[RMDB]
RNA sequence: GGGAACGACUCGAGUAGAGUCGAAAAGAAAAACAGGAAGAACCGUUGCUCUCAUACACCCCAUUGUAUUGGGUGGCUUGUUCUUUUAUACAUUGUGGGCAGGUAACUUAGGAUGUCCUCAAAGAAAAUUAUCGGUAUUAUUCGUAAUACCGAUAAUAAAAGAAACAACAACAACAAC
Reactivity to 2A3 in 0.01 (KOAc 150mM, MgCl2 10mM, bicine 150mM(pH8.5), 24C), signal-to-noise 9, nucleotides 027 to 126: g090a010a100a010a010a010c080a020g100g040a030a030g020a050a020c010c030g040u050u050g010c000u000c000u010c020a020u030a060c020a030c020c050c010c020a080u070u150g060u070a090u050u120g040g000g020u020g030g000c020u040u050g020u020u020c000u020u040u030u030a150u020a060c090a110u060u050g020u040g020g000g000c010a020g060g090u110a080a040c040u070u090a060g130g090a090u040g010u000c000c000u020c020a040a070a020g150a010a100a020
Reactivity to DMS in 0.01 (KOAc 150mM, MgCl2 10mM, bicine 150mM(pH8.5), 24C), signal-to-noise 9, nucleotides 027 to 126: g020a050a060a080a110a110c140a110g010g000a060a050g010a060a060c050c180g010u020u010g000c040u010c020u010c070a050u010a060c040a070c100c020c010c080a110u030u010g010u010a060u020u020g010g000g020u010g000g000c080u000u010g000u000u000c020u010u010u000u010a080u020a130c130a100u000u000g000u000g000g000g000c020a020g000g010u020a060a100c150u020u040a110g010g010a110u010g000u000c000c000u000c030a010a030a070g010a090a050a100